[RMDB]
RNA sequence: GGGAACGACUCGAGUAGAGUCGAAAAUCAAUCGAAUUGUUGGGUGAAAGUUGGAGGAUAAAUCCUCACCAAGAUUUAAAUUAAGCAAGAGAUAUAAGGCCGCUCCUUAUAUUGCGACUUGCUUAAAGAUAUCCGGCAAAGUUCGCUUUGCCGGAAACACACCAUUAAUGUUCGCAUUAAUGGUGUGAAAAGAAACAACAACAACAAC
Reactivity to 2A3 in 0.01 (KOAc 150mM, MgCl2 10mM, bicine 150mM(pH8.5), 24C), signal-to-noise 1, nucleotides 027 to 156: u090c020a000a030u080c040g150a050a100u050u060g020u040u100g010g000g060u100g040a210a070a050g090u160u140g050g000a000g000g000a000u130a150a170a050u040c010c000u020c010a010c000c020a020a050g060a070u110u220u140a040a120a230u050u000a000a000g000c000a000a000g000a030g000a010u030a050u000a010a010g000g000c130c000g040c080u110c020c000u030u070a010u010a010u000u080g060c030g050a090c010u000u020g000c000u010u000a000a000a000g000a000u100a050u020c000c010g000g010c000a000a000a020g010u040u120c200g000c120u010u010u000g010c000c000g000g000a000a000a000
Reactivity to DMS in 0.01 (KOAc 150mM, MgCl2 10mM, bicine 150mM(pH8.5), 24C), signal-to-noise 1, nucleotides 027 to 156: u010c060a120a120u020c120g010a100a120u010u000g020u010u030g000g000g030u000g020a060a080a040g020u000u020g010g020a190g030g000a120u010a030a110a150u000c000c020u000c000a080c070c040a030a100g000a100u020u000u000a050a080a210u000u000a000a020g000c010a010a020g010a300g000a000u000a000u000a010a040g020g030c080c280g000c290u000c000c010u000u020a010u000a030u010u020g010c020g040a130c020u000u000g010c020u020u000a010a030a130g000a240u000a090u010c000c000g010g000c010a010a020a010g070u000u010c300g000c030u000u000u000g010c000c050g000g000a000a020a030